An RNA of 177 nucleotides, treated with 2A3 and DMS and read out base by base. Source: RMDB library OK1LIB, as collected in RNAgym. Reactivities are rounded to 0.1 and cut off at 0 and 3. DMS adducts were read by reverse transcription with MarathonRT. For DMS, 1,957 sequencing reads were counted.

[RMDB]
RNA sequence: GGGAACGACUCGAGUAGAGUCGAAAAUUAUUGAAAUCCAAGAUUUUGAGGAAGCAGCCAUUGUUAGAGAUGAAAUUAAAGCACUAAAAGCUGAGAGUGAGGUGCAACAUGAUGACGCAUAAUAUUCGCUUUUCAACAAGUUCGCUUGUUGAAAAGCAAAAGAAACAACAACAACAAC
Reactivity to 2A3 in 0.01 (KOAc 150mM, MgCl2 10mM, bicine 150mM(pH8.5), 24C), signal-to-noise 3, nucleotides 027 to 126: u060u050a060u030u120g130a060a000a000u120c040c000a020a040g130a180u020u130u000u060g040a030g020g010a030a000g000c000a000g030c050c010a080u040u090g110u110u260a080g020a000g000a080u120g020a010a020a040u170u250a020a220a000g020c010a020c000u050a020a090a100a070g160c120u110g010a040g000a000g050u010g000a060g000g000u000g000c030a000a000c000a030u100g020a080u070g010a000c000g050c080a020u090a150a090u110a300u140u140c050
Reactivity to DMS in 0.01 (KOAc 150mM, MgCl2 10mM, bicine 150mM(pH8.5), 24C), signal-to-noise 2, nucleotides 027 to 126: u050u010a060u000u030g010a200a020a040u020c020c020a110a060g030a140u000u020u030u010g000a100g000g000a020a070g040c030a060g010c030c300a170u020u010g020u000u000a040g010a080g020a040u000g000a000a090a020u000u010a140a080a130g000c000a120c080u020a080a130a080a090g000c050u010g010a020g010a070g000u000g000a170g000g000u060g000c030a000a090c110a050u010g010a090u000g000a020c060g030c050a010u020a010a100u010a180u000u000c190